Annotation: The record gives the reactivity of an RNA of 207 nucleotides to DMS and 2A3. The data come from the RNA Mapping Database (RMDB), library M2RFPK. The DMS profile rests on 2,200 reads. DMS adducts were read by reverse transcription with MarathonRT.
[RMDB]
RNA sequence: GGGAACGACUCGAGUAGAGUCGAAAAACCGGCGGUAAAUCAACUCAGUUGAAAGCCGCGAGCGCUUUGGGUGCGAACUCAAAGGACGGCAGAUCCGGUGUAAUUCCGGGGCCGACGGUUAGAGUCCAAAAGAGGUUAUCGUUCGCGAUAACCUCAACGUAAUAAUUAACUUCGGUUAAUUAUUACGAAAAGAAACAACAACAACAAC
Reactivity to DMS in 0.01 (KOAc 150mM, MgCl2 10mM, bicine 150mM(pH8.5), 24C), signal-to-noise 2, nucleotides 027 to 156: a020c020c000g010g060c000g020g040u000a080a200a150u010c000a010a050c030u000c020a230g030u010u010g000a060a190a280g000c000c000g040c030g000a090g080c100g000c000u010u010u000g000g000g020u010g000c300g010a130a030c000u000c000a000a060a040g000g010a040c020g000g010c000a120g010a150u010c000c000g000g000u000g020u010a180a300u010u000c010c010g000g000g000g000c000c000g020a010c030g000g030u010u000a140g000a160g000u000c030c030a050a050a100a200g010a020g010g010u000u030a000u000c000g040u020u010c300g050c000g010a010u000a010a000c000c000u000c010a010a020
Reactivity to 2A3 in 0.01 (KOAc 150mM, MgCl2 10mM, bicine 150mM(pH8.5), 24C), signal-to-noise 2, nucleotides 027 to 156: a000c000c010g020g000c010g000g010u070a130a110a180u060c010a020a040c080u130c300a220g000u030u020g030a070a040a010g010c000c020g000c010g040a080g060c130g060c000u000u010u020g000g010g010u050g030c030g070a100a010c010u010c010a000a000a000g000g070a050c010g000g000c030a030g010a240u040c000c000g000g000u010g010u050a040a020u120u000c000c010g000g000g000g050c000c000g000a030c000g000g010u000u040a070g020a030g140u050c020c000a050a070a000a090g010a000g000g000u010u000a000u000c010g010u040u050c200g000c000g060a000u000a000a000c040c000u000c000a000a000